This 177-nucleotide RNA was probed chemically with DMS and 2A3.
RNA sequence: GGGAACGACUCGAGUAGAGUCGAAAAGAAAGGCAGCCAGUGCAGCCCACGAAGCCACUCGACGCAUGCUUUUGCAUGCCGCCCACGACUGAGGGCAGCUGCGGCACUGAGGGCAGCUGCCGAAAGAAUUAAAUACUGAGUUCGCUCAGUAUUUAAUAAAAGAAACAACAACAACAAC
Reactivity to DMS in 0.01 (KOAc 150mM, MgCl2 10mM, bicine 150mM(pH8.5), 24C), signal-to-noise 9, nucleotides 027 to 126: g010a090a110a150g000g010c020a030g020c030c030a060g010u000g020c040a140g010c060c050c040a130c110g010a120a100g010c010c020a070c080u000c060g010a080c180g010c020a010u000g000c000u000u010u010u010g010c010a000u000g010c010c110g010c010c010c090a100c150g000a070c110u010g010a130g000g000g010c030a040g000c020u000g010c050g020g000c040a080c070u010g010a120g000g000g010c050a070g000c010u000g010c000c000g010a020a070a080g000a130
Reactivity to 2A3 in 0.01 (KOAc 150mM, MgCl2 10mM, bicine 150mM(pH8.5), 24C), signal-to-noise 5, nucleotides 027 to 126: g070a020a080a010g020g000c010a010g030c040c010a030g030u030g050c030a040g070c020c020c010a050c050g060a060a010g020c010c010a100c030u050c040g080a050c050g000c010a010u020g000c000u140u220u240u300g000c020a000u020g000c010c010g030c000c030c010a070c050g160a040c090u160g080a130g040g020g010c010a000g010c020u020g000c000g020g010c020a030c080u090g030a140g030g050g030c020a000g000c010u000g000c000c000g000a010a010a000g030a010
Reactivities are rounded to 0.1 and cut off at 0 and 3.